[RMDB]
RNA sequence: GGGAACGACUCGAGUAGAGUCGAAAAACUAGCAGGUGCUUUUCGACGGCAGUAAGGCCAUCUCCUCCAAUGCUGCGCAGCCACUCCAACUCUGCUUCGCUGAAAACUGAGGCACCAUAGAGGAUCGGGUCUUCCAAAAGUUCGCUUUUGGAAGACCAAAAGAAACAACAACAACAAC
Reactivity to DMS in 0.01 (KOAc 150mM, MgCl2 10mM, bicine 150mM(pH8.5), 24C), signal-to-noise 1, nucleotides 027 to 126: a080c030u000a090g000c070a160g030g010u010g070c040u000u050u000u000c100g030a060c100g010g010c060a050g010u020a090a190g000g010c030c060a180u010c060u000c010c030u030c050c050a090a160u010g000c010u000g010c070g030c000a050g000c020c040a120c060u050c080c090a070a100c050u000c030u000g040c040u030u000c090g050c090u000g000a060a050a110a160c110u010g000a070g010g030c010a020c080c020a140u000a040g000a090g030g000a120u000c070g000
Record summary:
The record gives the reactivity of an RNA of 177 nucleotides to DMS. Conditions: 150 mM KOAc, 10 mM MgCl2 and 150 mM bicine (pH 8.5), 24 C. The DMS profile rests on 607 reads.